[RMDB]
RNA sequence: GGGAACGACUCGAGUAGAGUCGAAAAUGGCCGUUCUUAGUUCGUGGAGUGAUUUCUCUGGUUAAUUCCGAUAACGAACGAGGCUCAAAUAUAUUAAAUAGAUAUCUUCAGGAUUAUGGUGCUGAAACUUGCUCCAAAAAUUCGUUUUUGGAGCAAGAAAAGAAACAACAACAACAAC
Reactivity to DMS in 0.01 (KOAc 150mM, MgCl2 10mM, bicine 150mM(pH8.5), 24C), signal-to-noise 3, nucleotides 027 to 126: u050g020g000c000c010g010u020u010c100u020u010a130g020u000u000c010g020u000g000g020a050g030u000g000a120u010u000u020c050u010c070u000g000g020u010u000a100a080u010u010c030c000g000a120u020a160a050c010g010a010a000c030g030a040g000g000c030u030c090a050a030a060u120a080u010a040u010u020a020a040a080u010a090g000a080u010a040u010c040u010u000c040a100g010g000a060u010u010a050u000g000g020u010g030c030u000g000a100a080a130
Reactivity to 2A3 in 0.01 (KOAc 150mM, MgCl2 10mM, bicine 150mM(pH8.5), 24C), signal-to-noise 4, nucleotides 027 to 126: u120g040g000c010c020g090u250u110c080u100u140a050g000u000u000c040g010u030g000g030a040g000u100g150a210u080u200u080c060u020c050u080g080g010u090u070a140a030u290u050c000c010g040a080u070a150a020c000g000a010a010c030g000a030g000g020c030u010c100a030a110a000u130a000u080a000u090u210a070a060a070u100a010g040a050u070a020u120c050u010u000c010a030g000g050a040u040u100a060u210g070g000u060g000c010u010g000a050a090a090

Record summary
An RNA of 177 nucleotides, treated with DMS and 2A3 and read out base by base. DMS adducts were read by reverse transcription with MarathonRT.